[RMDB]
RNA sequence: GGGAACGACUCGAGUAGAGUCGAAAAUGAGGAACGCCGCCAGGUCCCGGUGCUGGUUGUCGUCCAGUUCGUGUCGGUACGACUUGCCGGUAGCGUUGUGGCGCACCUUGGUGCUGCGAGUGGAAUGGACUCUGUAGGAUUUCGAUCCUACAGAGUCAAAAGAAACAACAACAACAAC
Reactivity to DMS in 0.01 (KOAc 150mM, MgCl2 10mM, bicine 150mM(pH8.5), 24C), signal-to-noise 4, nucleotides 027 to 126: u020g010a120g010g010a150a120c050g010c040c020g000c030c060a080g010g010u000c040c010c030g010g020u010g020c020u000g000g000u000u000g000u000c030g010u000c010c010a080g000u010u010c150g020u010g000u000c080g010g000u000a020c060g000a030c030u000u000g010c020c020g000g020u010a100g030c020g010u000u010g030u010g000g010c050g020c050a240c030c000u000u010g020g040u000g000c050u010g010c020g010a110g020u000g010g010a170a140u000g010
Reactivity to 2A3 in 0.01 (KOAc 150mM, MgCl2 10mM, bicine 150mM(pH8.5), 24C), signal-to-noise 3, nucleotides 027 to 126: u110g020a070g090g030a120a050c030g010c000c000g000c030c020a010g020g070u070c020c000c000g050g000u070g010c000u000g020g030u040u040g060u080c010g010u000c020c010a030g030u130u160c100g030u160g080u120c070g010g040u140a030c020g010a040c070u070u270g000c020c000g050g000u040a030g040c020g050u050u120g140u150g090g000c030g010c020a040c000c000u060u110g040g040u070g020c130u060g010c010g060a060g060u130g010g100a100a120u090g080

Annotation: This 177-nucleotide RNA was probed chemically with DMS and 2A3. The DMS profile rests on 5,093 reads. The RNA was probed in 150 mM KOAc, 10 mM MgCl2 and 150 mM bicine (pH 8.5) at 24 C. It was measured as part of the RMDB library OK2TST.